[RMDB]
RNA sequence: GGGAACGACUCGAGUAGAGUCGAAAAAAAGAAAGAAGGAAGGAAGGAAGGAAAGAAGGAAGGAAGGAAGGCAGGCUCCCUGGGGCAGGUGGCUGCACAGUCAUGGCGGAGGUGACCAAAGCCACAUCAUGUCCGUCGUUCGUUCAUCUGUCCAUGCUCUUGCUUGUAGGUUCGCCUACAAGCAAGAAAAAGAAACAACAACAACAAC
Reactivity to 2A3 in 0.01 (KOAc 150mM, MgCl2 10mM, bicine 150mM(pH8.5), 24C), signal-to-noise 1, nucleotides 027 to 156: a000a000a000g060a010a060a000g020a000a000g030g000a000a000g010g020a000a020g010g000a000a100g030g020a010a080a030g050a060a050g050g020a030a030g090g010a020a000g050g000a030a000g040g000c030a000g010g010c050u000c000c010c050u030g020g010g000g000c010a000g000g010u010g000g000c010u080g030c050a020c010a080g110u120c030a010u160g030g000c000g000g000a000g030g040u020g040a080c040c010a170a100a030g020c030c000a030c000a030u010c020a000u090g140u080c000c000g010u050c080g000u000u060c040g000u050u070c000a100u000c000u020g020u010c050c000a070u100g010c010

Structure probing data (2A3) for a 207-nucleotide construct. Reactivities are given for positions 27 through 156. The RNA was probed in 150 mM KOAc, 10 mM MgCl2 and 150 mM bicine (pH 8.5) at 24 C.